Chemical mapping of a 177-nucleotide RNA with 2A3 and DMS. Conditions: 150 mM KOAc, 10 mM MgCl2 and 150 mM bicine (pH 8.5), 24 C. The DMS profile rests on 1,682 reads. Source: RMDB library OK1LIB, as collected in RNAgym. The 2A3 profile rests on 1,367 reads.
RNA sequence: GGGAACGACUCGAGUAGAGUCGAAAAUGGUGCGAUCUCCACUCACUGCAACCUCUGCCUCCCGGGUUCAAGUGAUUCUCCUGCUUCAGCCUCCCGAGUAGUUGGGACUACAGGUGUGUGCCACCACAAUGCUGGUACUCUUCGGAGUACCAGCAUUAAAAGAAACAACAACAACAAC
Reactivity to 2A3 in 0.01 (KOAc 150mM, MgCl2 10mM, bicine 150mM(pH8.5), 24C), signal-to-noise 2, nucleotides 027 to 126: u130g010g010u060g040c080g010a020u030c000u000c020c020a050c010u000c000a040c060u050g000c030a010a020c010c000u030c040u090g030c040c010u010c000c000c040g010g020g060u000u070c110a110a020g030u020g080a060u100u000c040u020c000c010u040g000c010u050u100c030a060g020c040c000u030c030c000c000g030a050g010u090a040g030u000u150g040g000g070a020c010u040a050c000a090g040g000u040g000u000g030u100g100c000c000a020c000c010a010c050
Reactivity to DMS in 0.01 (KOAc 150mM, MgCl2 10mM, bicine 150mM(pH8.5), 24C), signal-to-noise 1, nucleotides 027 to 126: u020g000g030u010g000c030g000a100u030c030u030c060c040a090c110u000c070a120c010u000g000c060a090a100c030c030u030c070u030g000c010c000u000c030c000c000g000g000g000u000u000c160a110a110g000u020g030a050u000u000c120u000c030c040u000g000c020u020u000c000a140g010c070c000u000c000c000c000g000a100g020u000a020g000u000u030g000g000g000a300c030u040a030c090a100g020g000u000g000u000g000u000g000c050c000a010c050c030a140c150